[RMDB]
RNA sequence: GGGAACGACUCGAGUAGAGUCGAAAAGAUAUGGACGGAUUCAGGGAGAGCGAUGUCGGAAACGACAUUGCUCGAAGAACUGACUGUCCGUCCUAAGUCAAAAGUUGCGAACUUCGGUUCGCAACAAGUUAAGAAUGUCGUUCGCGACAUUCUUAACAAAAGAAACAACAACAACAAC
Reactivity to DMS in 0.01 (KOAc 150mM, MgCl2 10mM, bicine 150mM(pH8.5), 24C), signal-to-noise 4, nucleotides 027 to 126: g020a040u000a250u000g000g000a020c000g000g020a030u000u010c010a030g000g000g000a160g000a010g010c010g020a000u000g010u000c010g020g000a070a050a130c000g010a020c000a000u000u000g000c010u000c030g020a020a150g000a150a260c020u000g000a040c300u010g010u000c000c000g010u000c000c000u000a000a090g010u010c040a130a090a060a160g000u000u000g000c000g000a000a010c000u000u010c290g010g000u000u000c000g000c020a010a000c010a020a060
Reactivity to 2A3 in 0.01 (KOAc 150mM, MgCl2 10mM, bicine 150mM(pH8.5), 24C), signal-to-noise 2, nucleotides 027 to 126: g020a020u050a020u100g010g000a000c000g000g000a030u090u030c010a010g050g040g070a260g020a000g080c010g010a000u000g000u000c000g020g000a050a020a010c000g000a000c000a000u010u010g000c060u020c010g000a020a010g020a040a030c010u020g040a020c080u140g070u020c000c000g000u000c000c000u000a030a020g010u010c020a000a010a080a190g000u000u000g000c010g010a010a010c000u070u160c300g210g020u000u010c000g000c000a000a000c000a000a000
Overview: Structure probing data (DMS and 2A3) for a 177-nucleotide construct. Reactivities are given for positions 27 through 126. The RNA was probed in 150 mM KOAc, 10 mM MgCl2 and 150 mM bicine (pH 8.5) at 24 C. Source: RMDB library TTRDES, as collected in RNAgym. For DMS, 4,866 sequencing reads were counted.